RNA sequence: GGGAACGACUCGAGUAGAGUCGAAAACGAGGUGUGUGUGCACCAGGUGGCGACCGGCCUGACUGGGAACGGCUGUGAUGCCGCCCUGCCCAGCAGGUGGGUUGGCAGAGUGUGGGGCGGAUGCCGACCACCAUAUCACUUUCGAGUGAUAUGGUGGAAAAGAAACAACAACAACAAC
Reactivity to DMS in 0.01 (KOAc 150mM, MgCl2 10mM, bicine 150mM(pH8.5), 24C), signal-to-noise 5, nucleotides 027 to 126: c050g020a130g010g020u010g030u010g010u020g030u020g030c010a020c030c030a130g000g020u000g020g000c000g010a040c010c000g010g000c000c000u010g000a110c010u000g000g010g020a140a200c060g000g000c000u000g010u060g020a110u030g010c010c020g010c300c100c080u040g000c020c000c000a020g000c010a010g000g030u000g000g010g010u000u010g010g000c030a040g000a120g020u030g010u010g000g000g000g010c020g010g020a080u020g000c000c030g020a260
Reactivity to 2A3 in 0.01 (KOAc 150mM, MgCl2 10mM, bicine 150mM(pH8.5), 24C), signal-to-noise 9, nucleotides 027 to 126: c060g030a070g050g000u030g000u040g010u040g070u140g060c020a020c010c010a010g060g090u060g040g010c020g010a020c000c010g050g010c000c000u200g080a300c010u000g000g000g020a040a040c000g000g000c000u020g070u120g120a070u250g030c000c000g030c030c000c010u140g070c000c000c000a000g000c000a000g010g010u050g050g000g000u030u030g070g010c030a020g030a050g070u150g040u100g010g020g010g010c030g030g030a050u120g010c010c010g020a050